[RMDB]
RNA sequence: GGGAACGACUCGAGUAGAGUCGAAAAACGCCACAAGGUGGCUAUAUUGACCUCGUUGGCCAAGGGACGUUAUACCGCAAUAAUUAUCAGAGUCAACAUGAUGCCAAACAGAAUGGUUAUGGUGCGGAAACGAGGUUUUAUUCGUAAAACCUCGUUUAAAAGAAACAACAACAACAAC
Reactivity to 2A3 in 0.01 (KOAc 150mM, MgCl2 10mM, bicine 150mM(pH8.5), 24C), signal-to-noise 1, nucleotides 027 to 126: a020c040g010c040c000a020c040a000a160g300g000u020g000g000c040u060a070u070a030u270u070g010a000c000c000u050c050g040u000u040g000g000c050c120a110a120g070g000g030a000c000g000u000u040a030u020a160c000c000g020c020a010a040u040a110a090u150u060a060u120c020a010g010a000g120u070c000a000a110c000a080u110g060a070u060g070c000c010a010a020a010c050a040g120a190a100u090g050g000u050u040a100u150g100g000u050g010c020g060g000
Reactivity to DMS in 0.01 (KOAc 150mM, MgCl2 10mM, bicine 150mM(pH8.5), 24C), signal-to-noise 4, nucleotides 027 to 126: a100c210g020c010c000a020c050a160a150g010g030u000g000g000c020u010a050u000a090u000u010g000a130c040c000u000c160g020u010u010g010g010c030c050a080a090g000g020g020a060c120g010u000u000a060u010a190c020c030g000c040a030a080u000a020a050u000u000a100u010c040a070g000a140g010u000c040a050a070c050a080u010g000a060u010g010c020c050a030a080a120c150a080g000a100a040u020g010g010u000u000a050u000g020g010u000g000c030g000g000